[RMDB]
RNA sequence: GGGAACGACUCGAGUAGAGUCGAAAAGAUAUGGACUCAGCUUUUGACGCGAUCUUGAUCGGAAACGAUCAAGUCGCGAUAAGCUGGUCCUAAGUCAAAGGCAGACAUCGUUCGCGAUGUCUGCCAAGGAAGUGAGAUACUUCGGUAUCUCACUUCCAAAAGAAACAACAACAACAAC
Reactivity to DMS in 0.01 (KOAc 150mM, MgCl2 10mM, bicine 150mM(pH8.5), 24C), signal-to-noise 1, nucleotides 027 to 126: g000a070u000a300u020g000g000a000c000u000c000a000g020c000u000u000u000u000g010a180c060g000c000g000a000u000c000u000u000g030a020u000c000g020g000a090a070a160c010g030a000u000c000a000a000g000u000c000g020c000g010a020u000a030a010g020c000u000g010g000u010c000c000u000a020a030g010u000c010a030a150a130g010g000c000a000g000a000c000a000u000c000g020u010u010c190g030c030g020a020u000g000u000c000u000g010c000c000a000a020
Reactivity to 2A3 in 0.01 (KOAc 150mM, MgCl2 10mM, bicine 150mM(pH8.5), 24C), signal-to-noise 2, nucleotides 027 to 126: g010a020u100a030u140g010g000a040c060u080c300a010g000c000u120u040u130u300g210a150c070g020c010g000a040u070c010u050u000g000a000u030c020g000g020a020a020a070c010g000a000u010c000a000a000g010u010c010g000c000g000a000u000a000a000g000c010u000g000g000u010c000c000u010a130a010g060u000c080a060a070a110g010g000c030a000g020a010c010a000u000c000g080u110u100c190g000c030g130a010u000g000u010c000u000g000c000c000a000a000